RNA sequence: GGGAACGACUCGAGUAGAGUCGAAAAAUAAGUGAGAGACCGAUAGCAAACAAGUACCGUGAGGGAAAGAUGAAAAGAACUUUGAAAAUAGAGUUAACAGUACGUGAAAUUGCUGAAAGGGAAACGUCACGUAACUUUCAUUCGUGAAAGUUACGUGAAAAGAAACAACAACAACAAC
Reactivity to DMS in 0.01 (KOAc 150mM, MgCl2 10mM, bicine 150mM(pH8.5), 24C), signal-to-noise 2, nucleotides 027 to 126: a040u010a120a030g000u000g000a100g000a090g010a100c050c010g030a090u000a140g000c040a010a020a120c010a020a040g040u000a100c000c050g000u000g000a130g040g030g000a020a050a040g000a160u000g000a060a030a040a180g020a030a050c000u000u000u000g010a110a010a100a210u030a030g000a040g000u000u030a090a090c070a060g000u000a030c080g030u030g060a140a000a060u000u000g010c010u020g000a030a080a130g050g020g010a030a060a090c130g070u000
Reactivity to 2A3 in 0.01 (KOAc 150mM, MgCl2 10mM, bicine 150mM(pH8.5), 24C), signal-to-noise 3, nucleotides 027 to 126: a000u150a000a010g040u030g090a110g000a010g040a040c020c030g070a110u080a020g010c030a010a000a140c010a100a030g070u010a020c000c080g050u050g050a070g050g190g030a040a010a030g040a030u230g010a000a090a000a090g060a010a010c010u060u110u100g080a090a120a040a020u170a060g010a000g030u010u040a070a040c000a020g000u040a000c040g110u140g060a110a050a080u050u020g000c030u060g100a040a030a060g010g010g050a100a040a000c020g100u000
An RNA of 177 nucleotides, treated with DMS and 2A3 and read out base by base. DMS adducts were read by reverse transcription with MarathonRT. Source: RMDB libraries RFM100 and RFMREP, as collected in RNAgym. The reactions ran in a buffer of 150 mM KOAc, 10 mM MgCl2 and 150 mM bicine (pH 8.5), at 24 C.